[RMDB]
RNA sequence: GGGAACGACUCGAGUAGAGUCGAAAAGUCUCGUGACCUUGUGACUAUUCCACGCGAUGUGUGGAACGAUAUACAGGGCUACAUCGACUCUCUGGAACGUGAGAACGAUAGCCUUAAGAAUCAACUAAUGGAAGCUGACGAAUACGUAGCGGAACUAUGCAUGUAGUCGUUUCGACGACUACAUGCAAAAAGAAACAACAACAACAAC
Reactivity to 2A3 in 0.01 (KOAc 150mM, MgCl2 10mM, bicine 150mM(pH8.5), 24C), signal-to-noise 2, nucleotides 027 to 156: g000u000c000u020c030g140u170g090a110c000c030u020u030g000u050g030a090c050u110a160u070u000c000c000a010c010g090c090g130a250u300g140u000g000u050g020g040a060a050c110g080a050u040a000u050a190c080a090g000g000g000c000u000a000c030a060u030c020g010a050c010u010c000u000c000u080g270g130a110a020c130g020u090g000a030g010a030a000c000g010a010u000a010g020c000c000u000u010a040a010g040a130a050u070c070a020a050c150u130a050a050u050g120g060a120a150g070c050u040g010a010c010g060a100a070u150a060c170g030u030a030g000c000g000g000a000a000c000u010a050
The record gives the reactivity of an RNA of 207 nucleotides to 2A3. The RNA was probed in 150 mM KOAc, 10 mM MgCl2 and 150 mM bicine (pH 8.5) at 24 C. For 2A3 the reverse transcriptase was SuperScript II with manganese.